[RMDB]
An RNA of 177 nucleotides, treated with DMS and 2A3 and read out base by base. The reactions ran in a buffer of 150 mM KOAc, 10 mM MgCl2 and 150 mM bicine (pH 8.5), at 24 C.
RNA sequence: GGGAACGACUCGAGUAGAGUCGAAAAUAUUUUGAAAUGUAAAUAGCGCAACAGGUGCCAUAUACAAACUGCCUUUUUUUCGUUUUAGUUUACUUAUUGUGAAAUGUAAAUAUGUCCCACUGCUCAACCUUGUACAACUGUUCGCAGUUGUACAAGGAAAAGAAACAACAACAACAAC
Reactivity to DMS in 0.01 (KOAc 150mM, MgCl2 10mM, bicine 150mM(pH8.5), 24C), signal-to-noise 1, nucleotides 027 to 126: u010a030u010u010u000u010g000a070a110a080u000g010u000a010a060a050u000a050g010c040g040c070a040a040c220a090g000g010u010g010c040c070a010u010a150u000a130c120a000a060a110c110u000g030c030c010u000u000u010u010u010u000u010c020g010u000u000u000u000a100g010u000u000u000a030c030u010u000a130u010u010g030u020g010a060a050a030u030g010u010a050a010a040u010a050u000g000u020c030c000c010a170c150u020g000c090u000c070a050a280
Reactivity to 2A3 in 0.01 (KOAc 150mM, MgCl2 10mM, bicine 150mM(pH8.5), 24C), signal-to-noise 1, nucleotides 027 to 126: u040a030u050u090u030u090g050a030a050a030u020g000u060a020a020a080u040a030g010c030g000c010a000a030c010a080g140g000u010g010c060c000a040u130a020u000a150c120a040a120a010c040u050g000c000c000u080u080u000u010u000u010u030c020g000u050u030u020u150a000g010u010u110u000a040c010u050u100a070u130u110g050u000g070a090a050a050u040g010u030a000a060a030u050a010u050g040u000c040c000c000a000c050u110g020c000u030c060a030a110